Chemical mapping of a 207-nucleotide RNA with 2A3. For 2A3, 992 sequencing reads were counted. For 2A3 the reverse transcriptase was SuperScript II with manganese. The reactions ran in a buffer of 150 mM KOAc, 10 mM MgCl2 and 150 mM bicine (pH 8.5), at 24 C. As a SHAPE reagent, 2A3 marks flexible, mostly unpaired nucleotides at the ribose 2'-OH.
[RMDB]
RNA sequence: GGGAACGACUCGAGUAGAGUCGAAAACUUCUGCUUCGGCAGAAGAAAAAAUCCUAAGUCAAUCAUCGAUCGUCCUAGGGUCAUCGAUCUAUCGGAAACGAUAGGGAGACCCGGGACGGGAGAUUGAUAUGGAAAAAAAGAUAAGUUCGCUUAUCAAGGUCAUAUGAUUCUUCGGAAUCAUAUGACCAAAAGAAACAACAACAACAAC
Reactivity to 2A3 in 0.01 (KOAc 150mM, MgCl2 10mM, bicine 150mM(pH8.5), 24C), signal-to-noise 2, nucleotides 027 to 156: c000u010u010c010u000g060c000u060u060c150g160g000c030a010g000a000a020g020a100a010a000a000a000a030u050c020c010u060a140a000g030u030c010a000a000u010c040a050u160c070g120a080u050c020g020u000c040c010u300a300g030g000g000u060c060a210u300c010g050a040u010c000u000a000u000c000g040g060a110a060a090c000g000a010u000a020g000g010g000a010g000a000c000c010c030g000g000g000a000c000g000g010g000a010g000a000u000u040g000a000u010a050u110g000g090a040a100a010a000a060a000a030g090a010u180a100a000g060u130u130c210g070c150u030u030a010u060c040a040a120